[RMDB]
RNA sequence: GGGAACGACUCGAGUAGAGUCGAAAACAGUCAACGUGAAGGCGGGCCAGACCAUCGCCGCAUUCUACCAGAGCACCGUCAUGAUCUUUGGCACGAUGGCUCGCUACAUACGCAGAGUUAGGGAAAACAUCACGAGCUCAUUCGUGAGCUCGUGAUGAAAAGAAACAACAACAACAAC
Reactivity to DMS in 0.01 (KOAc 150mM, MgCl2 10mM, bicine 150mM(pH8.5), 24C), signal-to-noise 2, nucleotides 027 to 126: c050a150g010u030c090a140a130c030g020u000g000a220a190g000g010c010g040g010g010c020c030a100g010a170c070c050a040u000c090g000c060c020g030c070a060u020u000c100u000a070c020c000a090g000a050g020c110a070c010c020g010u000c100a060u030g020a060u000c020u000u000u000g000g020c050a060c160g000a050u000g050g010c040u010c010g000c030u000a020c070a090u040a010c070g010c040a160g020a050g000u000u010a070g020g000g010a060a050a070a100
Reactivity to 2A3 in 0.01 (KOAc 150mM, MgCl2 10mM, bicine 150mM(pH8.5), 24C), signal-to-noise 1, nucleotides 027 to 126: c050a030g140u120c100a140a030c070g010u060g180a110a030g060g000c010g040g000g030c010c010a000g000a110c000c040a110u120c080g020c070c040g000c000a020u040u110c000u040a040c010c030a000g010a000g050c050a000c050c090g120u130c060a100u110g120a110u000c050u060u080u070g040g000c080a000c110g070a070u030g000g000c000u000c030g000c000u030a000c020a090u100a020c010g000c060a000g040a000g090u130u090a100g000g040g020a030a150a020a090
An RNA of 177 nucleotides, treated with DMS and 2A3 and read out base by base. For DMS, 1,233 sequencing reads were counted. Values cover nucleotides 27 to 126. DMS adducts were read by reverse transcription with MarathonRT. The reactions ran in a buffer of 150 mM KOAc, 10 mM MgCl2 and 150 mM bicine (pH 8.5), at 24 C.